[RMDB]
RNA sequence: GGGAACGACUCGAGUAGAGUCGAAAAUGGAGGGUGGCAAAUCAGCUUCUUUCCCCAGGGACGUGUGGUGUGCUACUGCGGAAGGUGAAUGGCACAGCCAUUAUCCAGCUGCCCUCUAAGAGGCAGAUGUUCUCCUUUUAUUCGUAAAAGGAGAACAAAAAGAAACAACAACAACAAC
Reactivity to 2A3 in 0.01 (KOAc 150mM, MgCl2 10mM, bicine 150mM(pH8.5), 24C), signal-to-noise 7, nucleotides 027 to 126: u130g010g000a020g020g020g020u030g020g000c030a000a010a190u100c040a120g060c030u090u030c000u040u070u030c000c000c000c000a050g040g010g030a020c050g110u120g060u110g110g110u060g040u050g090c010u040a160c020u060g050c020g070g090a070a030g140g040u080g070a100a110u090g020g000c010a000c020a220g090c010c000a020u060u050a030u060c030c000a010g010c000u000g000c010c010c010u000c000u000a040a020g020a050g060g000c040a010g020a130
Reactivity to DMS in 0.01 (KOAc 150mM, MgCl2 10mM, bicine 150mM(pH8.5), 24C), signal-to-noise 9, nucleotides 027 to 126: u010g010g000a020g000g010g040u000g010g010c030a060a090a110u010c140a100g010c080u000u000c060u000u000u000c010c000c010c210a110g000g000g010a040c100g020u010g030u000g020g020u000g010u000g010c030u010a060c060u000g010c200g010g010a080a070g010g010u000g000a060a100u000g010g010c020a080c100a110g010c000c000a010u000u000a090u000c050c050a190g000c000u000g000c010c000c000u000c040u000a030a060g010a100g000g010c080a080g000a170

This 177-nucleotide RNA was probed chemically with 2A3 and DMS.
The DMS profile rests on 29,729 reads.
The 2A3 profile rests on 14,717 reads.
Values cover nucleotides 27 to 126.
The RNA was probed in 150 mM KOAc, 10 mM MgCl2 and 150 mM bicine (pH 8.5) at 24 C.
It was measured as part of the RMDB library OK2TRN.
DMS adducts were read by reverse transcription with MarathonRT.